Structure probing data (DMS and 2A3) for a 177-nucleotide construct.
DMS adducts were read by reverse transcription with MarathonRT.
It was measured as part of the RMDB library TTRDEL.
2A3 adducts were read by reverse transcription with SuperScript II with manganese.

RNA sequence: GGGAACGACUCGAGUAGAGUCGAAAAGAUAUGGACUAGCUUUUGACGAGCCGUUUCGGAAACGAAACGAAGCUCGAUAAGCUAGGUCCUAAGUCAAAAGAUGCAGACAGUUCGCUGUCUGCAUCAAGCUUGAUUAUCCGUUCGCGGAUAAUCAAGCAAAAGAAACAACAACAACAAC
Reactivity to DMS in 0.01 (KOAc 150mM, MgCl2 10mM, bicine 150mM(pH8.5), 24C), signal-to-noise 1, nucleotides 027 to 126: g000a020u000a100u000g000g010a110c010u000a020g020c000u010u000u000u000g000a210c070g000a030g000c000c000g000u000u020u000c000g020g000a030a030a050c020g000a020a000a000c010g000a070a100g000c010u000c000g030a050u000a010a000g000c010u000a000g000g010u000c000c030u000a010a110g010u000c010a080a080a140a090g000a010u000g010c000a030g000a020c000a000g000u000u010c220g010c000u020g010u000c020u000g000c000a000u000c000a020a080
Reactivity to 2A3 in 0.01 (KOAc 150mM, MgCl2 10mM, bicine 150mM(pH8.5), 24C), signal-to-noise 1, nucleotides 027 to 126: g000a000u020a010u070g000g030a020c000u010a000g050c040u000u000u040u300g300a300c110g010a010g000c010c000g010u050u000u000c010g000g000a040a020a000c000g000a000a020a020c000g010a090a010g000c000u010c080g060a000u010a010a000g000c000u010a020g000g070u040c000c000u010a010a000g020u040c020a000a040a080a050g010a000u000g020c040a000g010a000c020a010g010u000u140c160g130c190u010g000u030c000u010g010c000a000u000c000a000a000